[RMDB]
RNA sequence: GGGAACGACUCGAGUAGAGUCGAAAAGAAAAGAGACCGAUGCGUCUCGCCUGAUCAGGGAAGAUCGAUAAAAGAGCCGUGGUGGAAGGCUCCACUCACCAAUAAAAGCAUCGUCAAUAAAAGAAAAGGGUUAUGAUUAGUUCGCUAAUCAUAACCCAAAAGAAACAACAACAACAAC
Reactivity to 2A3 in 0.01 (KOAc 150mM, MgCl2 10mM, bicine 150mM(pH8.5), 24C), signal-to-noise 3, nucleotides 027 to 126: g030a000a050a020a020g010a000g000a000c020c060g060a070u100g000c040g020u010c000u000c000g000c000c010u070g000a050u030c030a070g060g010g160a070a030g010a070u010c030g070a090u070a230a090a030a010g110a030g030c050c030g070u090g000g100u060g040g120a040a010g110g010c000u000c010c000a020c000u050c010a060c030c040a090a000u120a120a030a000a000g000c010a050u020c000g070u040c060a060a080u140a170a150a040a030g120a050a080a000a030
Reactivity to DMS in 0.01 (KOAc 150mM, MgCl2 10mM, bicine 150mM(pH8.5), 24C), signal-to-noise 2, nucleotides 027 to 126: g010a030a060a230a070g000a000g020a000c070c060g020a070u020g000c040g010u000c020u000c000g050c040c000u000g010a010u000c100a090g070g000g020a130a040g000a020u000c030g000a030u040a140a080a100a120g000a100g000c000c040g000u000g040g040u000g010g000a060a160g000g010c030u000c010c060a010c080u020c030a110c130c030a080a070u110a080a080a030a150g020c020a050u000c020g000u020c110a110a130u020a110a100a070a080g000a050a080a090a170